[RMDB]
RNA sequence: GGGAACGACUCGAGUAGAGUCGAAAAUAAAGCCAUGCUUUGAAGGAUCUGCCAAGCUCACUUUUAAUCAUGAGAAAGAAAUUACCCACACGGAGUCAGCAGAAAAUGAGAAAGUAGAGCUCGUGCUAAAGGUCAGUAAAUUCGUUUACUGACCUUUAAAAGAAACAACAACAACAAC
Reactivity to 2A3 in 0.01 (KOAc 150mM, MgCl2 10mM, bicine 150mM(pH8.5), 24C), signal-to-noise 5, nucleotides 027 to 126: u120a010a050a000g030c030c020a080u100g020c050u120u100u110g050a100a050g070g030a110u020c030u060g030c010c000a040a030g030c010u000c000a080c010u070u050u020u100a110a070u060c040a030u070g090a010g110a090a140a010g080a000a140a040u090u090a180c000c010c010a020c010a000c080g020g000a020g020u030c010a020g030c040a020g090a100a080a010a020u060g000a030g090a030a040a000g020u060a040g020a000g010c010u030c030g060u110g010c000u040
Reactivity to DMS in 0.01 (KOAc 150mM, MgCl2 10mM, bicine 150mM(pH8.5), 24C), signal-to-noise 8, nucleotides 027 to 126: u030a050a080a080g020c010c070a100u010g010c030u000u010u000g010a090a120g010g000a180u010c020u000g020c010c050a100a060g000c020u000c010a070c040u000u010u010u000a060a120u010c070a050u010g000a120g000a090a070a070g010a080a070a080u030u020a100c030c010c020a080c180a090c120g000g010a080g000u000c100a090g000c050a070g000a050a040a080a040u020g010a070g000a040a030a040g000u000a070g010a040g010c020u000c060g010u030g010c080u010